Source information:
Structure probing data (2A3 and DMS) for a 177-nucleotide construct. 2A3 adducts were read by reverse transcription with SuperScript II with manganese. Values cover nucleotides 27 to 126.
RNA sequence: GGGAACGACUCGAGUAGAGUCGAAAAAUAGUACUGAAUUUGAUGCAGUCAUCAUGAUAGAUUGUGAUUUGCAACAUCCACCUGAAUAUAUUCCGAAAAUGGUUGAAGGUUUUAUGGAAGGCUAUGACCAGCCUCUUGAUUUCGAUCAAGAGGCUGGAAAAGAAACAACAACAACAAC
Reactivity to 2A3 in 0.01 (KOAc 150mM, MgCl2 10mM, bicine 150mM(pH8.5), 24C), signal-to-noise 1, nucleotides 027 to 126: a010u040a000g000u060a150c040u040g120a170a150u120u060u120g070a040u070g000c000a000g090u090c010a000u000c000a000u090g190a300u170a120g090a060u100u120g090u090g060a000u170u060u080g150c100a000a010c000a060u000c000c000a000c060c000u000g040a110a000u150a000u120a030u090u000c030c050g100a000a000a030a130u290g120g000u010u060g040a120a130g010g000u000u050u020u210a000u060g150g000a000a000g000g040c060u090a050u080g000a090
Reactivity to DMS in 0.01 (KOAc 150mM, MgCl2 10mM, bicine 150mM(pH8.5), 24C), signal-to-noise 1, nucleotides 027 to 126: a000u000a040g010u000a150c010u010g000a220a050u000u010u010g020a020u030g000c050a030g030u050c060a070u030c060a030u020g010a290u010a030g050a050u010u030g020u000g050a130u000u010u010g000c040a030a120c100a000u000c060c120a070c080c010u080g010a120a020u000a070u050a060u000u050c000c080g090a120a000a040a020u000g000g000u000u020g040a110a050g030g000u000u000u010u000a200u040g020g000a090a000g000g000c020u000a030u000g000a100
Conditions: 150 mM KOAc, 10 mM MgCl2 and 150 mM bicine (pH 8.5), 24 C.